[RMDB]
RNA sequence: GGGAACGACUCGAGUAGAGUCGAAAAAUUACGGGCGGCGCAGGUGGAGCUGCGAUCCCUCCGCCCAUCGCGUGCUGUCUCGGUGGCCCAGACGCUGCAAACGGACAGGCGGGCCACCUGCAACGAACUAACUGUUGAUAUUCGUAUCAACAGUUAGAAAAGAAACAACAACAACAAC
Reactivity to DMS in 0.01 (KOAc 150mM, MgCl2 10mM, bicine 150mM(pH8.5), 24C), signal-to-noise 8, nucleotides 027 to 126: a080u000u010a080c150g010g000g010c020g000g010c160g020c020a030g010g010u010g020g010a160g010c020u010g000c030g010a090u000c020c020c020u010c010c010g010c010c000c010a080u010c080g010c100g010u000g010c040u000g000u000c080u000c200g010g020u000g000g010c010c010c010a110g020a100c090g000c010u000g000c070a100a090a180c260g010g000a160c030a030g000g020c060g010g000g000c000c000a010c000c010u000g010c050a090a050c070g000a070a190
Reactivity to 2A3 in 0.01 (KOAc 150mM, MgCl2 10mM, bicine 150mM(pH8.5), 24C), signal-to-noise 9, nucleotides 027 to 126: a010u190u130a080c080g000g000g000c020g020g000c020g000c020a010g000g060u140g090g150a110g090c020u010g010c020g030a050u060c010c000c000u020c010c000g000c000c000c010a030u070c040g040c020g020u050g040c050u070g040u120c030u020c140g000g000u000g010g000c010c000c020a060g030a080c110g020c140u020g000c030a150a190a160c060g050g090a070c000a010g010g030c010g000g010g010c000c000a000c000c000u000g000c010a020a040c010g080a050a040